RNA sequence: GGGAACGACUCGAGUAGAGUCGAAAACUUAGAAGGCUGAAGCAGGGGAUCACUUGAGGCCAUGAGUUCAAAGCCAGGCUGAGCAACUAGCCUGAUCCUGUCCCUGUCAAACAAACAAAAAAGGAGUAUGAAUUGAGUGUGAUACAUACCAUUUAACGCUGAACUAUUCUUUCGAGAAUAGUUCAGCAAAAGAAACAACAACAACAAC
Reactivity to DMS in 0.01 (KOAc 150mM, MgCl2 10mM, bicine 150mM(pH8.5), 24C), signal-to-noise 1, nucleotides 027 to 156: c030u010u010a110g000a100a150g000g000c050u030g010a090a070g030c040a130g000g020g010g050a070u010c020a050c060u000u000g020a110g010g010c030c030a090u020g000a150g020u020u000c040a070a060a200g010c040c020a000g000g010c040u000g000a240g010c100a040a070c090u000a050g020c000c030u000g010a030u000c020c020u020g040u000c020c000c090u010g020u000c040a090a090a140c110a110a050a150c060a050a050a090a020a060a050g020g010a080g000u010a030u000g020a040a120u000u000g000a080g000u000g010u020g010a160u030a090c020a080u000a060c030c000a090u000u000u010a090a090c140
Reactivity to 2A3 in 0.01 (KOAc 150mM, MgCl2 10mM, bicine 150mM(pH8.5), 24C), signal-to-noise 2, nucleotides 027 to 156: c020u030u030a030g010a180a040g140g000c010u060g030a060a010g020c020a010g010g010g000g040a030u110c030a020c090u030u110g030a050g000g020c000c050a060u080g020a020g020u030u080c050a080a010a030g060c030c000a010g010g000c010u010g030a020g090c030a020a080c030u090a010g000c000c000u010g000a030u070c010c010u030g010u000c000c000c010u060g030u070c020a020a070a050c040a020a060a020c020a020a100a000a020a020a010g090g010a060g010u020a040u040g060a080a060u050u070g040a040g080u130g000u020g020a010u020a070c020a010u050a030c030c000a070u160u250u230a090a040c120